An RNA of 177 nucleotides, treated with 2A3 and DMS and read out base by base.
The RNA was probed in 150 mM KOAc, 10 mM MgCl2 and 150 mM bicine (pH 8.5) at 24 C.
The DMS profile rests on 2,170 reads.
For 2A3 the reverse transcriptase was SuperScript II with manganese.
For 2A3, 5,149 sequencing reads were counted.
RNA sequence: GGGAACGACUCGAGUAGAGUCGAAAAGAUAUGGAAACAAUAGGACAUGGUGCUCGGAAACGAGGCACCAACAGCCUAUGUUUCCUAAGUCAAAACUCCUCGAUGAAGUUCGCUUCAUCGAGGAGAAGUCUUAAUUCGUGUUCGCACGAAUUAAGACAAAAGAAACAACAACAACAAC
Reactivity to 2A3 in 0.01 (KOAc 150mM, MgCl2 10mM, bicine 150mM(pH8.5), 24C), signal-to-noise 2, nucleotides 027 to 126: g000a010u070a010u100g000g020a000a010a010c050a250a210u020a020g000g050a070c060a150u050g000g000u010g020c020u000c000g010g030a040a020a020c020g020a050g120g180c010a000c030c000a010a020c020a000g000c000c000u000a000u000g000u000u000u000c000c000u000a050a010g010u000c010a010a030a100a240c000u000c000c000u010c010g000a000u000g010a000a000g040u100u130c210g090c180u010u000c000a000u010c000g000a010g010g010a010g000a000a020
Reactivity to DMS in 0.01 (KOAc 150mM, MgCl2 10mM, bicine 150mM(pH8.5), 24C), signal-to-noise 3, nucleotides 027 to 126: g000a010u000a300u010g000g000a000a000a010c010a040a060u000a000g010g020a070c160a180u000g020g010u000g010c000u000c020g000g010a080a050a150c000g010a020g010g020c000a000c000c020a010a040c290a150g000c020c010u010a020u000g000u000u000u000c000c000u000a020a070g020u000c030a110a070a120a210c000u000c000c000u000c000g030a010u010g000a010a010g010u000u010c280g000c010u000u000c010a020u010c000g010a000g000g020a000g010a000a020